[RMDB]
Chemical mapping of a 207-nucleotide RNA with 2A3. It was measured as part of the RMDB library RNAMAK.

RNA sequence: GGGAACGACUCGAGUAGAGUCGAAAAGCGUACUACAUUCGUACGCGUAGGCGAAGAACGUGUGCUAAGUUGUCCCAAAUAGGACAAUAUGCACACGGGAGCCUACCCCCACGAAUGUAUCGCAAAAGGAUUGGCGCGCUUCGGCGCGCCAAUCCAACCGAUUGAUAUUGUUCGCAAUAUCAAUCGGAAAAGAAACAACAACAACAAC
Reactivity to 2A3 in 0.01 (KOAc 150mM, MgCl2 10mM, bicine 150mM(pH8.5), 24C), signal-to-noise 2, nucleotides 027 to 156: g010c030g040u080a130c050u000a000c000a000u020u020c000g020u020a020c040g000c020g000u000a000g000g000c000g130a100a030g050a030a020c000g000u010g000u000g000c000u020a060a110g020u000u010g020u050c000c030c040a100a280a100u180a060g000g000a000c000a000a000u020a010u110g020c000a020c000a000c030g000g000g010a000g010c000c000u010a000c010c000c000c010c000a020c010g010a000a000u000g010u020a040u300c030g020c040a050a070a050a000g000g000a000u010u020g020g040c000g010c000g080c150u080u150c300g110g000c080g000c010g000c000c010a000a000u000c000c000a000a060